[RMDB]
RNA sequence: GGGAACGACUCGAGUAGAGUCGAAAACGGUAGUUCGCUACCGACUUGGCCAUCACCUUCAUCCACGGACCGUCGGGCACGUACCUGCCCGGAGAAGGAGAGCAAUAACGCGAAGUUUCGACUUCGCACAUGAAGCGCUGUUCGCAGCGCUUCAUGUAAAAGAAACAACAACAACAAC
Reactivity to 2A3 in 0.01 (KOAc 150mM, MgCl2 10mM, bicine 150mM(pH8.5), 24C), signal-to-noise 1, nucleotides 027 to 126: c010g000g000u000a050g010u010u080c200g000c060u000a000c010c000g070a060c000u010u170g090g120c030c040a090u060c020a050c050c000u050u020c010a220u000c050c060a070c160g120g010a140c010c000g060u060c030g050g010g010c000a010c060g090u250a040c020c000u010g000c020c000c000g000g010a030g010a000a010g080g040a060g010a020g000c080a090a120u150a200a050c040g030c020g010a010a000g050u050u080u030c160g020a040c000u030u020c000g010c000
Reactivity to DMS in 0.01 (KOAc 150mM, MgCl2 10mM, bicine 150mM(pH8.5), 24C), signal-to-noise 1, nucleotides 027 to 126: c050g010g000u000a010g030u000u000c270g000c020u000a000c010c000g000a050c140u000u000g050g040c050c080a080u000c030a120c050c000u000u000c010a090u000c020c230a160c110g010g000a110c130c020g000u000c000g000g000g000c020a020c030g010u000a140c090c020u000g000c000c000c010g000g020a020g030a090a070g000g020a090g020a090g000c140a050a060u050a090a120c300g000c000g000a030a000g000u000u020u000c180g020a040c000u000u000c000g020c040
Structure probing data (2A3 and DMS) for a 177-nucleotide construct. Values cover nucleotides 27 to 126. The RNA was probed in 150 mM KOAc, 10 mM MgCl2 and 150 mM bicine (pH 8.5) at 24 C. Source: RMDB library RFMREP, as collected in RNAgym.